RNA sequence: GGGAACGACUCGAGUAGAGUCGAAAACAUAAGACCUCAGAGCUAAUGAGCCACAUACCUACCCAAGGUGAAAGCUCCUUCUCUCGCAAUGUGUAACUCAUGAUUCUCAUGACCCCUGGUAGGAGAGCGCGCUAACACGCCUUCGGGCGUGUUAGAACUCAAGAUAAAGGUUCGCCUUUAUCUUGAGAAAAGAAACAACAACAACAAC
Reactivity to 2A3 in 0.01 (KOAc 150mM, MgCl2 10mM, bicine 150mM(pH8.5), 24C), signal-to-noise 4, nucleotides 027 to 156: c020a040u180a100a050g050a060c000c030u070c060a050g010a020g030c030u090a130a040u050g020a030g040c050c000a060c010a060u170a030c010c020u030a060c020c020c030a050a020g020g000u050g050a080a050a030g000c010u020c020c020u070u030c020u010c010u040c040g050c080a060a120u060g070u030g000u100a070a080c020u010c050a010u060g040a150u250u020c080u030c080a030u130g040a090c000c000c000c040u030g040g040u040a020g020g060a040g010a000g020c060g000c010g000c020u000a000a000c000a000c000g020c000c020u030u080c160g070g000g000c000g000u000g000u000u000a000g000a000a000
Reactivity to DMS in 0.01 (KOAc 150mM, MgCl2 10mM, bicine 150mM(pH8.5), 24C), signal-to-noise 2, nucleotides 027 to 156: c070a100u000a090a160g000a100c030c010u020c030a080g010a050g050c100u000a120a080u010g000a060g020c020c020a060c050a130u000a040c030c010u010a070c080c030c020a150a060g010g030u000g010a110a160a110g000c040u000c010c040u010u000c040u000c010u000c030g010c080a080a060u000g000u000g000u000a060a080c050u010c020a050u000g010a120u000u000c060u000c000a090u030g000a170c030c030c020c010u010g010g050u010a020g010g010a130g020a050g010c000g040c040g000c000u000a040a030c000a020c000g000c010c010u000u010c240g070g040g040c000g050u000g000u000u000a000g010a070a120